[RMDB]
RNA sequence: GGGAACGACUCGAGUAGAGUCGAAAACCGGCACUUUAAUCUCGGUUGAUCCAAUUUUAACUGGCGAAAAUAACUACGCUCUCGCUGCUUAAUCGAAGCACAGUAGAUUGAAGCUUAAUCCUUACACAAGGUGUUUGGACGAGACAUCACCCGGAAGGCUAUUGUUAGUGUUCGCACUAACAAUAGCAAAAGAAACAACAACAACAAC
Reactivity to 2A3 in 0.01 (KOAc 150mM, MgCl2 10mM, bicine 150mM(pH8.5), 24C), signal-to-noise 7, nucleotides 027 to 156: c030c000g050g090c120a090c090u180u140u210a140a140u080c070u060c070g010g000u020u030g020a030u030c020c030a060a080u100u120u090u180a130a090c070u050g020g000c050g070a050a050a070a120u140a120a070c090u130a040c090g030c040u000c000u000c020g030c030u010g000c000u030u020a030a010u030c020g040a040a000g090c140a070c080a210g020u020a010g000a020u020u050g190a020a000g000c000u000u010a010a010u000c000c000u010u030a010c020a010c080a140a120g210g000u010g020u010u010u020g000g010a010c010g010a000g000a010c020a030u020c020a030c010c000c000g040g030a070a030g110
Reactivity to DMS in 0.01 (KOAc 150mM, MgCl2 10mM, bicine 150mM(pH8.5), 24C), signal-to-noise 2, nucleotides 027 to 156: c010c010g020g000c040a080c070u000u020u010a040a100u000c050u000c010g030g020u010u000g010a070u000c000c020a000a070u000u000u010u000a060a070c050u010g010g030c010g000a100a060a080a150u000a120a120c100u000a070c070g010c070u000c040u000c040g010c000u000g020c090u000u000a060a080u000c070g010a130a110g020c080a100c080a080g020u000a090g010a060u000u010g000a040a040g020c040u000u000a070a150u000c010c020u000u010a020c020a050c010a220a130g050g020u000g020u010u000u010g010g010a050c050g010a190g000a120c040a080u010c020a050c050c010c010g020g020a090a190g030